[RMDB]
Structure probing data (DMS and 2A3) for a 177-nucleotide construct. DMS (dimethyl sulfate) methylates the pairing face of unpaired adenines and cytosines.
RNA sequence: GGGAACGACUCGAGUAGAGUCGAAAAGAGCCGACAGAGAAGUCGGGAAGCGACGAGAGAGAAUAGAAUACAUUGGAAUUCGAGAUACUGUCACAAAAUGACAGACGUCGCCAUAUUCUCGGAGAAGAUCCCGCUCAUUAUUCGUAAUGAGCGGGAUAAAAGAAACAACAACAACAAC
Reactivity to DMS in 0.01 (KOAc 150mM, MgCl2 10mM, bicine 150mM(pH8.5), 24C), signal-to-noise 4, nucleotides 027 to 126: g010a180g020c000c000g020a010c000a110g010a210g020a090a030g040u000c000g000g010g020a090a120g040c000g020a020c040g020a130g010a110g030a200g000a090a060u010a110g020a060a000u030a070c180a290u040u040g000g000a070a030u000u000c010g000a190g000a080u020a070c000u000g000u000c000a030c150a080a110a130a300u020g000a000c000a000g000a220c020g000u010c000g020c000c140a050u050a100u010u000c000u000c010g000g000a130g000a080a100g000
Reactivity to 2A3 in 0.01 (KOAc 150mM, MgCl2 10mM, bicine 150mM(pH8.5), 24C), signal-to-noise 4, nucleotides 027 to 126: g050a010g130c020c020g010a000c050a000g290a000g110a300a000g000u010c000g000g030g010a040a030g000c000g000a000c020g010a000g000a000g000a000g040a180a070u100a090g050a050a030u120a080c100a220u160u220g050g100a050a050u070u040c000g000a000g020a120u120a100c000u000g000u000c000a040c040a060a100a010a090u090g000a010c000a010g050a050c000g000u020c000g000c010c000a040u120a040u160u010c000u000c000g080g030a090g000a060a080g040
Annotation: The reactions ran in a buffer of 150 mM KOAc, 10 mM MgCl2 and 150 mM bicine (pH 8.5), at 24 C. The 2A3 profile rests on 2,147 reads.